Chemical mapping of a 207-nucleotide RNA with 2A3. It was measured as part of the RMDB library ARCHII. Conditions: 150 mM KOAc, 10 mM MgCl2 and 150 mM bicine (pH 8.5), 24 C.
RNA sequence: GGGAACGACUCGAGUAGAGUCGAAAACUCUUAAGACGGGGAUAAAGAGGAGUCAAACCCAAAAGAGAUCGCGUGGAUGCCUAGCUUGGGGUUGAAGCGUUAAAUUUAAUCAAGCUAGCUUAUUUGUGGCGUGUCUGUCCGCAGCAAGUAAGUGAAUGAAGUUUUUUAUCUUCGGAUAAAAAACUUCAAAAGAAACAACAACAACAAC
Reactivity to 2A3 in 0.01 (KOAc 150mM, MgCl2 10mM, bicine 150mM(pH8.5), 24C), signal-to-noise 1, nucleotides 027 to 156: c000u050c000u060u080a050a020g050a020c080g050g020g000g000a000u060a080a110a020g080a050g080g000a030g010u080c060a040a080a160c000c010c020a050a060a060a000g110a000g010a030u110c080g010c020g020u010g000g010a010u050g010c000c000u000a010g000c000u010u000g040g030g000g020u020u030g000a000a000g000c000g040u040u080a000a030a130u140u180u110a030a030u130c010a020a000g000c010u040a010g000c000u010u000a000u000u010u040g010u010g030g000c010g040u120g050u100c150u160g120u080c050c010g000c010a010g000c000a040a000g010u000a000a020g000u010g080a020a020u040